[RMDB]
The record gives the reactivity of an RNA of 177 nucleotides to 2A3 and DMS. Reactivities are given for positions 27 through 126. The DMS profile rests on 1,560 reads. The reactions ran in a buffer of 150 mM KOAc, 10 mM MgCl2 and 150 mM bicine (pH 8.5), at 24 C.
RNA sequence: GGGAACGACUCGAGUAGAGUCGAAAACAAAAACGAGAUUGACGGCGUGGCCUCGCCCCGCACCGUGCCCGUAACGCCCGUGCUCUCCAAUACGUGGAGCUUUCAUCAGGAACUAGCCAACGCAACGCUAAGUAACCCUCUUCGGAGGGUUACUUAGAAAAGAAACAACAACAACAAC
Reactivity to 2A3 in 0.01 (KOAc 150mM, MgCl2 10mM, bicine 150mM(pH8.5), 24C), signal-to-noise 1, nucleotides 027 to 126: c040a010a050a000a010a010c060g050a050g080a170u070u100g060a040c030g000g000c020g010u020g020g030c010c000u040c040g010c020c020c000c000g000c000a020c000c050g030u060g020c000c040c000g020u020a080a000c050g050c050c020c000g020u070g020c030u020c010u010c040c040a100a090u140a150c050g060u090g010g020a030g000c020u050u030u010c060a130u060c050a040g040g190a020a020c030u000a040g020c000c020a030a010c020g030c060a060a020c040g010
Reactivity to DMS in 0.01 (KOAc 150mM, MgCl2 10mM, bicine 150mM(pH8.5), 24C), signal-to-noise 3, nucleotides 027 to 126: c100a040a060a040a040a070c100g010a080g000a120u000u000g010a130c090g020g000c060g060u000g060g000c070c040u000c090g000c010c030c000c030g020c110a060c050c050g040u020g000c040c010c050g000u020a080a090c140g000c040c020c020g050u000g000c100u010c020u010c060c040a090a140u010a080c170g000u000g010g000a070g010c120u010u010u000c030a130u020c090a080g000g010a060a050c100u000a090g030c030c060a050a060c030g010c070a070a080c210g000